[RMDB]
RNA sequence: GGGAACGACUCGAGUAGAGUCGAAAACUUGACCAGUCUUCUCGCCUAUUUGCGACGAAUACUGCGUCGUUAGGAUAUACUUGUCGGGUAGAUAUGUCAGGACAGGAACUCCUUGGCGGGUAGCAAACCAUGCUCGUAGUUUCGACUACGAGCAUGGAAAAGAAACAACAACAACAAC
Reactivity to 2A3 in 0.01 (KOAc 150mM, MgCl2 10mM, bicine 150mM(pH8.5), 24C), signal-to-noise 3, nucleotides 027 to 126: c010u030u080g030a050c000c000a050g010u030c010u010u000c000u010c000g000c020c000u050a080u060u100u160g000c000g010a000c010g010a050a030u150a300c100u120g160c020g020u000c000g000u010u020a010g010g010a030u060a020u060a190c010u020u030g000u010c000g050g000g070u040a050g130a240u190a040u200g120u030c020a030g050g050a010c000a000g000g000a010a010c020u000c000c000u010u040g000g000c000g000g010g000u000a010g000c000a020a000a000
Reactivity to DMS in 0.01 (KOAc 150mM, MgCl2 10mM, bicine 150mM(pH8.5), 24C), signal-to-noise 2, nucleotides 027 to 126: c050u030u010g000a080c010c020a050g000u010c020u000u000c000u000c000g020c000c150u010a060u030u070u070g010c000g010a050c140g000a060a120u030a080c130u030g030c060g000u010c000g020u000u010a060g010g010a100u010a160u010a090c020u000u010g000u000c010g000g000g020u010a040g000a100u030a050u020g000u000c050a110g000g000a020c010a000g000g000a030a180c240u000c010c010u000u000g000g000c060g000g000g010u000a010g000c050a030a050a200